Structure probing data (2A3 and DMS) for a 207-nucleotide construct.
2A3 adducts were read by reverse transcription with SuperScript II with manganese.
RNA sequence: GGGAACGACUCGAGUAGAGUCGAAAAAUACUGUAAGCCAAUAAAACAUAACGCCAAAUACAAUAAAUGCUGUGCGAUGUACUUUCUAUGUGAUAUUUUGGCGUUAUUUUGAUUUACCAUUGCACAUCGCACAUGUUAACAGGCUAUACGGUUAUAACAUUACCUAAUAGUUCGCUAUUAGGUAAUGAAAAGAAACAACAACAACAAC
Reactivity to 2A3 in 0.01 (KOAc 150mM, MgCl2 10mM, bicine 150mM(pH8.5), 24C), signal-to-noise 7, nucleotides 027 to 156: a000u070a000c010u010g000u010a010a000g010c000c010a090a080u140a120a130a030a020c040a030u020a000a010c000g000c000c010a020a030a020u170a080c090a080a070u130a180a110a050u230g040c050u040g000u000g010c000g020a010u010g030u070a100c070u070u200u110c110u140a130u150g080u040g130a080u040a100u140u060u030u040g000g000c000g000u000u000a010u010u070u020u090g040a030u010u030u150a080c060c040a060u010u170g050c040a000c000a030u000c000g000c000a000c000a010u030g010u010u030a070a070c060a050g000g020c020u040a060u000a240c010g010g020u040u050a050u030a140a000
Reactivity to DMS in 0.01 (KOAc 150mM, MgCl2 10mM, bicine 150mM(pH8.5), 24C), signal-to-noise 3, nucleotides 027 to 156: a080u000a060c030u000g030u000a030a050g000c000c020a070a120u010a090a090a090a130c100a060u000a020a030c020g000c000c010a040a060a130u010a110c100a100a130u000a120a120a100u010g020c070u000g010u000g020c000g010a020u000g030u000a040c030u000u000u000c140u000a080u010g040u000g000a080u010a070u010u000u000u000g000g000c010g000u000u000a010u000u000u000u010g010a110u000u000u010a040c040c050a110u000u000g030c030a010c010a030u000c030g010c000a020c000a030u010g020u000u010a070a130c080a130g010g020c020u000a110u000a060c020g010g020u010u000a090u000a060a210